[RMDB]
Structure probing data (DMS and 2A3) for a 170-nucleotide construct. Values cover nucleotides 27 to 129. The reactions ran in a buffer of 150 mM KOAc, 10 mM MgCl2 and 150 mM bicine (pH 8.5), at 24 C. For DMS the reverse transcriptase was MarathonRT.
RNA sequence: GGGAACGACUCGAGUAGAGUCGAAAAUUCAUUCUGUCGUAGGCAUAAUUGGAAUUGUGUGGAUUGUGACACUGCAGGUGUGGGGAAUACCUUCAUCUGUGAAGAAGUCGCAAAUGACCUCACUACCGUACGUCUUGGUUCGCCAAGACGAAAAGAAACAACAACAACAAC
Reactivity to DMS in 0.01 (KOAc 150mM, MgCl2 10mM, bicine 150mM(pH8.5), 24C), signal-to-noise 8, nucleotides 027 to 129: u010u000c050a080u010u040c020u010g020u020c090g010u040a040g020g000c050a060u040a050a080u060u100g000g030a060a070u030u010g000u000g050u050g000g000a080u000u040g030u000g020a040c020a100c030u040g040c080a040g010g020u020g030u020g000g000g000g000a150a080u110a160c010c020u050u010c020a050u000c020u000g010u030g040a140a050g020a160a130g000u020c030g040c040a000a020a020u030g040a140c000c010u020c020a000c010u040a050c010c000g020u070a070
Reactivity to 2A3 in 0.01 (KOAc 150mM, MgCl2 10mM, bicine 150mM(pH8.5), 24C), signal-to-noise 9, nucleotides 027 to 129: u060u030c010a020u060u010c050u060g050u040c050g150u130a110g030g030c020a040u040a070a070u120u120g090g020a080a060u150u060g000u000g010u010g020g020a020u000u010g000u000g010a010c020a000c060u040g000c000a010g000g010u000g000u000g000g020g020g020a090a130u210a300c000c000u000u000c000a000u010c000u000g020u020g030a050a040g050a080a020g000u010c010g000c010a000a030a090u140g130a110c000c000u000c010a000c010u010a040c010c010g060u090a050